[RMDB]
RNA sequence: GGGAACGACUCGAGUAGAGUCGAAAAUGAAACGAAGGGGGGACGGAGAAGGCUAUGUUGGCCGGGGGACGGUUGUCCCGGUUUAAGCGUGUAGGCUGGUUUUCCAGGCAAAUCCGGAGAAAAAAAAGUUAGUAUAAACGUUCGCGUUUAUACUAACAAAAGAAACAACAACAACAAC
Reactivity to DMS in 0.01 (KOAc 150mM, MgCl2 10mM, bicine 150mM(pH8.5), 24C), signal-to-noise 2, nucleotides 027 to 126: u000g000a110a070a070c070g000a080a120g020g010g020g000g000g010a110c080g010g020a070g010a080a110g010g000c050u000a030u020g030u000u000g030g010c010c010g020g000g000g010g000a070c060g020g030u000u000g020u010c020c010c000g000g000u000u000u000a110a090g020c050g020u010g010u010a070g000g000c000u000g000g010u000u000u010u000c000c020a150g000g010c060a060a080a140u000c030c030g010g010a110g050a010a000a000a070a100a030a120a120